RNA sequence: GGGAACGACUCGAGUAGAGUCGAAAAUGCGGUUCGCCGCACUGAGCGGGGUCUCGAGAUGCGAAGCUAAGACAUGCUCUGAAGCCUCCACGGAGCAACAGCUUAGAACUACUUCGCGCUCGAGACGGAGGCACCCAUAAGAGCUUUUCGAAGCUAAUAGGUUAUUAUCAUUCGUGAUAAUAACCUAAAAAGAAACAACAACAACAAC
Reactivity to DMS in 0.01 (KOAc 150mM, MgCl2 10mM, bicine 150mM(pH8.5), 24C), signal-to-noise 2, nucleotides 027 to 156: u010g010c020g000g000u000u010c300g000c020c000g000c010a030c090u010g000a160g010c060g010g000g020g010u000c000u030c010g050a060g000a120u000g040c010g030a050a010g050c020u000a130a130g010a080c070a300u010g020c000u000c000u000g010a030a120g020c020c000u010c000c030a300c080g000g020a000g030c000a070a060c090a190g000c030u000u000a060g020a080a140c090u000a190c030u010u000c000g030c010g040c000u000c000g010a030g020a010c040g000g000a040g040g000c030a040c000c000c020a120u000a100a130g000a120g000c000u000u000u000u000c220g000a060a010g030c020u010a140a270
Reactivity to 2A3 in 0.01 (KOAc 150mM, MgCl2 10mM, bicine 150mM(pH8.5), 24C), signal-to-noise 5, nucleotides 027 to 156: u050g010c040g040g030u050u070c170g050c100c000g030c030a050c130u190g050a040g070c070g010g030g020g030u000c010u010c000g010a020g010a070u110g000c000g000a010a010g040c020u020a030a000g000a070c040a160u210g000c000u000c000u000g040a090a030g010c000c000u000c010c010a030c020g000g010a000g010c020a040a100c040a080g110c020u020u020a000g020a070a030c060u180a080c000u280u010c000g000c000g000c000u000c000g000a000g000a000c010g000g000a000g000g000c000a010c000c010c000a040u150a120a070g110a000g040c000u040u050u100u180c230g080a020a000g010c010u030a080a190
The data come from the RNA Mapping Database (RMDB), library RNAMAK. Chemical mapping of a 207-nucleotide RNA with DMS and 2A3.